[RMDB]
RNA sequence: GGGAACGACUCGAGUAGAGUCGAAAAGCUAUGUUGUAUGAUCUGAUUGACAAGCAUACAGUUAUCACAGUGAUGAGGCAAUCCAAAGAAGGGACUCUCACCUCAGAUGAUAUCCUAAUGGCAAUAGAGAAGACUAUCAGUUCGCUGAUAGUCUUCUAAAAGAAACAACAACAACAAC
Reactivity to 2A3 in 0.01 (KOAc 150mM, MgCl2 10mM, bicine 150mM(pH8.5), 24C), signal-to-noise 1, nucleotides 027 to 126: g000c010u040a040u120g100u050u060g050u100a020u000g040a150u060c040u080g020a190u090u200g020a030c020a090a010g000c000a030u010a010c020a050g030u070u020a040u040c010a000c040a040g010u000g070a200u110g000a040g000g080c160a110a030u000c070c010a020a160a100g220a170a160g140g000g010a010c020u010c000u000c020a000c000c000u040c060a030g060a140u030g000a000u040a050u000c040c030u060a110a040u060g010g000c030a040a030u080a040g210
Reactivity to DMS in 0.01 (KOAc 150mM, MgCl2 10mM, bicine 150mM(pH8.5), 24C), signal-to-noise 4, nucleotides 027 to 126: g010c070u010a020u000g020u010u010g020u000a040u010g000a180u000c030u010g010a240u020u010g010a120c100a120a120g000c040a020u000a040c070a070g010u010u000a040u000c030a010c120a140g010u010g010a070u020g010a040g000g000c110a110a130u010c010c020a070a070a150g020a210a160g010g000g010a040c080u000c010u000c030a030c020c050u010c100a090g020a190u000g000a040u000a030u000c030c080u010a090a070u000g010g010c030a040a060u010a090g020
The record gives the reactivity of an RNA of 177 nucleotides to 2A3 and DMS. Reactivities are given for positions 27 through 126. The reactions ran in a buffer of 150 mM KOAc, 10 mM MgCl2 and 150 mM bicine (pH 8.5), at 24 C. The data come from the RNA Mapping Database (RMDB), library OK2TRN.